[RMDB]
RNA sequence: GGGAACGACUCGAGUAGAGUCGAAAAUAAAUAGAAAUAGAGAUAGAAAUAGAAAGGGGUUCUAUUGUAAACGGCCGAAUAGAACCCUGUUCAAGUGGUCCGUCCACUGAUGUCGGGUUUAGGCCAACGAGUUUCACAGUUUCGACUGUGGAAUUCGAAAAGAAACAACAACAACAAC
Reactivity to DMS in 0.01 (KOAc 150mM, MgCl2 10mM, bicine 150mM(pH8.5), 24C), signal-to-noise 8, nucleotides 027 to 126: u060a050a070a090u040a090g000a090a070a090u030a120g010a130g010a110u010a070g000a090a060a100u020a080g000a060a070a090g000g000g010g000u000u000c000u000a010u000u000g000u020a050a080a110c190g010g010c010c010g010a020a020u010a030g000a000a000c000c000c010u000g000u010u000c070a060a040g020u000g000g000u020c150c160g000u020c010c000a020c020u000g000a050u010g010u010c090g000g010g010u000u000u010a060g010g000c010c010a080a190
Reactivity to 2A3 in 0.01 (KOAc 150mM, MgCl2 10mM, bicine 150mM(pH8.5), 24C), signal-to-noise 6, nucleotides 027 to 126: u060a000a030a020u140a040g080a040a120a020u170a060g030a020g040a030u090a080g070a060a170a020u170a080g070a080a170a030g010g010g000g000u000u000c000u010a010u000u050g060u080a140a150a110c100g000g020c010c020g020a000a010u010a020g010a000a000c000c000c000u010g020u030u100c020a040a000g010u010g010g010u000c020c050g030u000c010c000a010c020u030g010a050u060g030u050c050g060g000g000u040u100u100a040g000g000c000c000a000a010
Chemical mapping of a 177-nucleotide RNA with DMS and 2A3. The DMS profile rests on 24,995 reads. The data come from the RNA Mapping Database (RMDB), library OK1LIB. DMS adducts were read by reverse transcription with MarathonRT. The RNA was probed in 150 mM KOAc, 10 mM MgCl2 and 150 mM bicine (pH 8.5) at 24 C. Values cover nucleotides 27 to 126.